[RMDB]
RNA sequence: GGGAACGACUCGAGUAGAGUCGAAAAGCCGAGUCGACCGGAGCCUCCCCUACAAGGCGGAUACGGUGCAGACACGGAGUGAGCGGGAGACGGAGGUGUACGUCUGCGGAGGAAGAAAGGGCGACCGCGGCCUCAUAGUCUUCGGACUAUGAGGCCGAAAAGAAACAACAACAACAAC
Reactivity to DMS in 0.01 (KOAc 150mM, MgCl2 10mM, bicine 150mM(pH8.5), 24C), signal-to-noise 1, nucleotides 027 to 126: g000c000c080g000a000g050u000c050g010a160c040c050g000g000a030g000c020c030u000c030c010c000c070u060a070c250a100a050g000g080c230g000g000a000u000a050c010g010g010u000g010c040a000g000a040c000a100c000g000g000a060g000u000g000a110g030c150g020g000g000a000g000a000c060g030g000a070g000g030u000g010u000a120c120g000u030c000u050g070c120g000g000a200g030g050a090a090g000a170a170a070g000g000g000c020g000a060c050c090g000
Reactivity to 2A3 in 0.01 (KOAc 150mM, MgCl2 10mM, bicine 150mM(pH8.5), 24C), signal-to-noise 2, nucleotides 027 to 126: g010c000c000g020a000g000u040c000g000a030c000c000g000g010a010g140c020c020u010c000c000c060c000u070a120c050a180a030g020g010c070g000g000a030u040a040c000g000g000u030g130c120a060g010a070c040a000c000g010g000a040g060u110g010a050g030c070g000g020g000a060g030a030c060g050g090a070g070g000u050g020u030a010c020g030u000c020u040g020c000g040g080a090g020g000a050a100g040a040a060a030g030g010g010c010g000a010c010c020g020